Overview
The record gives the reactivity of an RNA of 177 nucleotides to DMS. Conditions: 150 mM KOAc, 10 mM MgCl2 and 150 mM bicine (pH 8.5), 24 C.

RNA sequence: GGGAACGACUCGAGUAGAGUCGAAAACUGGUUGAUGUUUUGCCCCCAUCCCCGCAAACCAGACGGAUCGCCUUUGCCGCCAAGCGAGCCAGAGCUCAAAUCGAUCGCGGGUUGUCCGAUGAAAUGCCCAUAGGCAACGUUUCGACGUUGCCUAUGGAAAAGAAACAACAACAACAAC
Reactivity to DMS in 0.01 (KOAc 150mM, MgCl2 10mM, bicine 150mM(pH8.5), 24C), signal-to-noise 2, nucleotides 027 to 126: c030u010g020g030u020u010g000a060u010g040u000u000u000u000g020c040c000c010c060c060a160u000c020c010c000c070g000c070a050a060a100c070c060a060g000a220c060g000g000a060u000c090g000c050c050u000u000u000g010c040c040g030c060c040a070a110g020c130g000a080g000c040c080a130g010a080g020c050u030c050a040a120a140u000c030g020a080u010c090g030c090g020g010g010u000u000g000u000c010c010g000a150u020g000a030a090a090u000g040c200